[RMDB]
RNA sequence: GGGAACGACUCGAGUAGAGUCGAAAAGGGUCUUUCGAGACCCAACAGCGUACUACACCUGAUGUAUGAUGACCUUUCUCCCCACCAGGCUUCCCAAAUAGGAAGCCUGAGGAAAGCAAGUACGCAGGUGUAUCGCCUUGUCAGUCUUCGGACUGACUACCAUAACAUGUUUCGACAUGUUAUGGUAAAAAGAAACAACAACAACAAC
Reactivity to DMS in 0.01 (KOAc 150mM, MgCl2 10mM, bicine 150mM(pH8.5), 24C), signal-to-noise 4, nucleotides 027 to 156: g000g020g030u000c000u010u000u000c240g010a100g030a040c000c000c000a010a020c040a050g000c020g030u000a050c070u010a060c010a040c010c020u000g000a090u000g020u000a020u000g010a150u000g010a120c280c020u010u000u000c040u000c290c080c020c060a300c220c020a030g020g010c000u010u010c010c000c000a060a130a170u000a050g000g020a040a020g010c000c010u000g000a070g030g000a030a030a020g000c040a070a220g010u000a010c010g010c020a020g020g030u000g000u000a010u010c030g000c020c030u000u000g000u000c000a020g010u000c000u000u010c270g030g000a080c000u000g000a030c020
Reactivity to 2A3 in 0.01 (KOAc 150mM, MgCl2 10mM, bicine 150mM(pH8.5), 24C), signal-to-noise 6, nucleotides 027 to 156: g020g010g000u010c020u040u120u140c240g030a020g010a010c000c000c000a000a010c010a000g000c000g040u050a110c030u010a010c020a020c010c010u110g150a300u140g170u010a010u030g210a300u150g100a170c040c020u020u040u030c030u080c040c050c010c000a030c010c000a000g010g000c010u000u000c010c010c020a190a300a100u160a050g000g000a000a010g000c010c000u000g000a010g000g000a010a000a000g000c030a060a210g010u000a000c010g000c010a010g020g000u020g000u010a080u300c010g000c010c010u020u060g010u000c000a000g000u000c000u010u090c180g070g010a000c000u000g000a000c000
An RNA of 207 nucleotides, treated with DMS and 2A3 and read out base by base. The reactions ran in a buffer of 150 mM KOAc, 10 mM MgCl2 and 150 mM bicine (pH 8.5), at 24 C.